[RMDB]
RNA sequence: GGGAACGACUCGAGUAGAGUCGAAAAGGGGCCGACCUGGCUUCGACGUGGGUCGCGAAGCAGUGCAGUGCAUACCGAGGACCAGUCACCUCGUAAAUCCAUCUGGGAAACUACAAACGCCAACGACGAGCGUUUCGCUCUCGCCGCUUAAUCCCGGGCACUAAGAUAUCUUCGGAUAUCUUAGUGCAAAAGAAACAACAACAACAAC
Reactivity to 2A3 in 0.01 (KOAc 150mM, MgCl2 10mM, bicine 150mM(pH8.5), 24C), signal-to-noise 4, nucleotides 027 to 156: g050g000g020g000c050c020g020a120c030c100u090g090g000c000u060u050c020g060a050c030g030u120g010g030g030u090c030g020c030g060a030a010g010c030a010g020u020g090c020a030g030u030g090c020a040u070a150c040c020g000a020g020g010a060c000c010a030g020u080c090a080c010c000u010c010g090u160a020a070a020u020c010c020a030u000c050u030g050g000g040a070a060a050c070u150a070c080a040a090a010c040g000c030c030a140a030c040g130a020c080g000a040g030c000g020u040u070u090c060g000c000u020c010u010c040g020c020c000g000c000u060u080a020a020u070c010c010c000g000g040
Reactivity to DMS in 0.01 (KOAc 150mM, MgCl2 10mM, bicine 150mM(pH8.5), 24C), signal-to-noise 1, nucleotides 027 to 156: g040g000g020g010c070c030g010a040c040c050u000g020g000c020u010u010c040g010a030c000g070u010g010g000g030u000c000g050c040g000a060a060g040c010a080g020u000g020c030a100g000u010g030c060a130u000a090c080c020g040a080g000g030a280c040c020a090g020u000c080a080c040c010u000c010g000u000a020a060a160u000c020c040a110u000c050u000g010g000g000a120a090a040c100u010a150c080a040a080a070c030g000c060c010a050a070c020g000a020c030g000a000g010c020g020u000u000u000c040g020c000u000c010u010c010g000c000c010g000c000u000u000a080a210u000c000c020c020g020g010
Overview
Chemical mapping of a 207-nucleotide RNA with 2A3 and DMS. For DMS the reverse transcriptase was MarathonRT. Source: RMDB library RSTRND, as collected in RNAgym. For DMS, 2,197 sequencing reads were counted. The RNA was probed in 150 mM KOAc, 10 mM MgCl2 and 150 mM bicine (pH 8.5) at 24 C.